[RMDB]
RNA sequence: GGGAACGACUCGAGUAGAGUCGAAAAGUUAGGUGAGGCUCCUAUGCAAACACAGGCCACUGCCCAAAAAUGUCCAAAGACGCCAAUGGGUAGAACAGGGAUUGUCGGAUUAAGGCUUUCCUUAAUGAAAACAAAGUAUGCUUCGGCAUACUUUGAACAACUAGGUAUAGUUCGCUAUACCUAGUUGAAAAGAAACAACAACAACAAC
Reactivity to 2A3 in 0.01 (KOAc 150mM, MgCl2 10mM, bicine 150mM(pH8.5), 24C), signal-to-noise 6, nucleotides 027 to 156: g050u050u050a030g010g030u040g070a070g030g020c010u060c040c030u090a070u180g050c050a050a090a030c050a030c020a090g080g000c030c010a030c020u010g000c000c000c000a020a020a010a010a000u020g010u000c010c020a210a080a110g010a000c010g000c010c000a020a050u010g000g000g000u010a010g010a060a020c060a040g020g020g020a030u010u020g020u020c010g060g060a090u150u210a120a080g010g000c000u010u000u030c010c000u050u080a100a090u180g080a040a040a020a020c000a000a000a000g000u000a000u010g010c000u050u080c190g040g000c000a000u000a000c010u000u000u000g000a000a000
Reactivity to DMS in 0.01 (KOAc 150mM, MgCl2 10mM, bicine 150mM(pH8.5), 24C), signal-to-noise 4, nucleotides 027 to 156: g000u010u000a050g020g020u010g010a100g010g020c020u000c030c020u010a080u000g000c080a120a090a120c050a070c030a060g010g010c020c020a100c030u000g000c000c010c000a030a040a080a110a090u000g010u000c050c040a120a090a220g010a070c040g030c040c050a070a210u000g000g020g020u010a030g000a110a170c070a100g000g010g010a100u000u000g020u000c000g030g020a140u000u010a060a090g020g010c110u000u000u000c030c010u000u000a040a050u000g000a100a080a110a160c010a000a030a030g000u000a000u000g000c010u000u010c300g050g020c000a010u000a000c010u000u010u000g000a070a140
Source: RMDB library M2RFPK, as collected in RNAgym. Structure probing data (2A3 and DMS) for a 207-nucleotide construct. Reactivities are given for positions 27 through 156. The DMS profile rests on 9,937 reads. In probing experiments dimethyl sulfate is read out at A N1 and C N3, which are open when not base-paired.